[RMDB]
Chemical mapping of a 177-nucleotide RNA with 2A3 and DMS. Conditions: 150 mM KOAc, 10 mM MgCl2 and 150 mM bicine (pH 8.5), 24 C. The data come from the RNA Mapping Database (RMDB), library RFM100. The 2A3 profile rests on 904 reads. The DMS profile rests on 791 reads.
RNA sequence: GGGAACGACUCGAGUAGAGUCGAAAACAAUCCUUUAGGGGAUGUAGCAUAUUAGUUUGAACAAUCGGCACAUUUUUGAUGUGUGAAUUAUGAGAAAUUUUAUGCACGAAUCGUAUAUCAUACGACAGAGCCAAUGUUACUUCGGUAACAUUGGCUCAAAAGAAACAACAACAACAAC
Reactivity to 2A3 in 0.01 (KOAc 150mM, MgCl2 10mM, bicine 150mM(pH8.5), 24C), signal-to-noise 2, nucleotides 027 to 126: c000a000a090u080c000c020u000u000u180a080g020g000g000g000a040u100g050u110a050g000c000a000u030a030u080u230a020g110u000u000u060g190a080a010c000a090a020u010c010g200g000c000a000c000a000u040u100u090u080u270g210a030u060g030u000g060u080g140a100a140u030u090a020u280g100a000g110a090a000a000u060u000u010u030a000u030g070c060a010c090g170a000a060u000c020g040u000a000u000a000u200c070a070u000a050c000g030a000c020a040
Reactivity to DMS in 0.01 (KOAc 150mM, MgCl2 10mM, bicine 150mM(pH8.5), 24C), signal-to-noise 1, nucleotides 027 to 126: c180a110a090u000c000c030u000u060u070a000g030g000g000g000a100u000g000u040a080g000c000a000u000a000u000u000a000g000u000u040u000g000a300a040c050a000a050u000c210g000g040c000a000c000a050u000u000u130u100u060g030a000u000g180u000g000u050g000a080a060u000u000a090u000g000a300g000a000a000a000u000u000u000u000a000u000g000c000a060c230g050a210a300u000c000g000u000a000u000a140u040c290a190u080a010c020g000a000c300a240